[RMDB]
RNA sequence: GGGAACGACUCGAGUAGAGUCGAAAAAUAAUCAACGAGAGUGUCAACCUGCCGCGAAGGUCUAUGAGUGGUCUGUUGCUCAUCUUUGUGUAGCGAACCUAGCGCAUCCUUUCGAGGAUGCGCUAGGGAGUGUUAGUUCCUUCGGGAACUAACACUCAAAAGAAACAACAACAACAAC
Reactivity to DMS in 0.01 (KOAc 150mM, MgCl2 10mM, bicine 150mM(pH8.5), 24C), signal-to-noise 3, nucleotides 027 to 126: a090u000a100a110u010c060a150a080c060g010a060g000a060g010u000g000u010c030a090a040c060c030u000g000c040c020g020c040g030a110a050g000g000u010c160u010a070u000g010a160g010u000g010g010u000c140u000g010u000u000g010c020u000c040a050u000c030u000u000u000g000u000g010u010a090g000c100g000a070a300c010c000u010a000g000c000g000c000a000u000c000c000u020u000u000c180g000a020g000g000a010u000g020c010g010c000u000a000g000g010
Reactivity to 2A3 in 0.01 (KOAc 150mM, MgCl2 10mM, bicine 150mM(pH8.5), 24C), signal-to-noise 2, nucleotides 027 to 126: a000u170a020a060u130c050a020a070c050g020a010g000a010g090u000g050u060c010a030a020c020c020u040g040c000c020g050c020g070a040a020g100g090u030c100u150a160u050g060a030g050u010g020g030u010c040u070g040u030u050g010c000u020c010a130u030c050u000u110u150g050u020g020u080a040g100c020g010a030a020c000c000u010a000g000c010g000c000a010u000c010c020u050u070u080c180g070a020g000g000a000u020g000c000g000c010u000a000g000g000